The record gives the reactivity of an RNA of 177 nucleotides to DMS and 2A3. For DMS the reverse transcriptase was MarathonRT. The data come from the RNA Mapping Database (RMDB), library TTRDEL.
[RMDB]
RNA sequence: GGGAACGACUCGAGUAGAGUCGAAAAGAUAUGGAGUAUGUCACUGCACCUGUAGCGAAGAACUCGGAAACGAGGGAGCUACCUGUGCAAACAUACUCCUAAGUCAAAAUCAGGGUUCGCCCUGAAAUCUCAUUUAUGUGUUCGCACAUAAAUGAGAAAAAGAAACAACAACAACAAC
Reactivity to DMS in 0.01 (KOAc 150mM, MgCl2 10mM, bicine 150mM(pH8.5), 24C), signal-to-noise 3, nucleotides 027 to 126: g000a040u000a300u000g010g010a040g000u000a000u000g000u000c020a040c010u000g000c000a010c010c020u000g000u000a000g010c000g020a070a100g010a160a240c010u000c000g010g010a120a130a180c000g010a000g000g000g000a080g000c000u000a010c010c040u000g010u000g000c000a000a070a010c000a020u000a000c010u000c000c000u010a010a070g010u010c040a090a050a120a150u000c010a000g010g010g010u000u010c190g010c010c000c000u000g020a000a070a070
Reactivity to 2A3 in 0.01 (KOAc 150mM, MgCl2 10mM, bicine 150mM(pH8.5), 24C), signal-to-noise 3, nucleotides 027 to 126: g020a010u040a040u160g020g000a020g000u010a010u010g000u000c000a000c050u020g010c000a000c010c010u010g000u000a000g000c010g150a300a010g010a100a060c000u000c010g020g030a060a040a020c020g000a010g020g000g010a010g000c000u000a000c000c010u010g000u000g020c010a020a060a020c000a000u000a010c010u000c010c000u000a020a000g000u000c000a000a020a020a290u050c000a000g050g020g040u090u160c220g170c060c010c000u000g020a060a020a040